[RMDB]
RNA sequence: GGGAACGACUCGAGUAGAGUCGAAAACAUUAGCCGUUCGCGGCUAAUGCCGACUGUCUUGUUUGAUGGUAGACUGGAAGGACAGGUAGACCUUUUUAGAAAUCGCCCAUUCAUUCGUGAAUGGGAAUUCUGUUUGUCAAUUCGUUGACAAACAGAAAAAAGAAACAACAACAACAAC
Reactivity to DMS in 0.01 (KOAc 150mM, MgCl2 10mM, bicine 150mM(pH8.5), 24C), signal-to-noise 3, nucleotides 027 to 126: c020a000u010u010a000g000c000c000g030u000u000c210g040c000g000g000c010u000a000a010u000g020c060c060g010a120c040u000g000u010c020u020u000g000u000u000u000g010a100u010g000g010u010a070g010a120c050u000g000g000a110a060g000g020a050c050a030g000g010u010a100g010a160c060c010u000u000u000u010u020a090g010a060a090a060u010c180g000c000c000c000a010u000u010c000a030u000u010c210g030u000g000a020a000u000g000g000g000a030a030
Reactivity to 2A3 in 0.01 (KOAc 150mM, MgCl2 10mM, bicine 150mM(pH8.5), 24C), signal-to-noise 2, nucleotides 027 to 126: c000a000u000u010a000g000c000c000g010u040u060c240g010c000g160g050c000u010a000a000u000g010c000c010g070a090c010u040g020u000c000u130u120g120u160u200u130g130a130u120g060g040u010a040g010a170c010u030g060g070a050a030g050g000a040c020a040g000g070u030a020g040a060c000c060u090u080u000u100u300a090g110a050a070a040u140c050g010c020c000c000a020u010u020c000a010u000u040c140g060u000g030a000a000u000g000g050g000a000a000